An RNA of 177 nucleotides, treated with DMS and read out base by base. Source: RMDB library OK2TRN, as collected in RNAgym. Conditions: 150 mM KOAc, 10 mM MgCl2 and 150 mM bicine (pH 8.5), 24 C. Reactivities are given for positions 27 through 126.
[RMDB]
RNA sequence: GGGAACGACUCGAGUAGAGUCGAAAAGAGUUGUCUGGAAGACUGAGAAACAGGAAGGAACUGUACAGCUCUGAUGGUUUGGUAGGAUUGGUGCCCAUAGGAUCGGGAGAGCUGCUACCGAGGAUUACCUCACGGAGAUGUUCGCAUCUCCGUGAGGAAAAGAAACAACAACAACAAC
Reactivity to DMS in 0.01 (KOAc 150mM, MgCl2 10mM, bicine 150mM(pH8.5), 24C), signal-to-noise 1, nucleotides 027 to 126: g000a050g000u000u000g000u000c010u020g040g010a220a100g000a180c010u000g000a190g010a120a120a130c180a050g000g010a070a100g000g000a120a060c030u010g030u000a070c040a040g030c010u000c010u010g000a080u010g010g010u000u000u000g000g010u000a030g030g000a090u030u020g020g000u000g070c030c010c010a130u000a070g010g010a050u010c110g060g020g000a050g010a090g010c050u000g000c010u000a030c020c030g000a140g000g010a120u000u000a110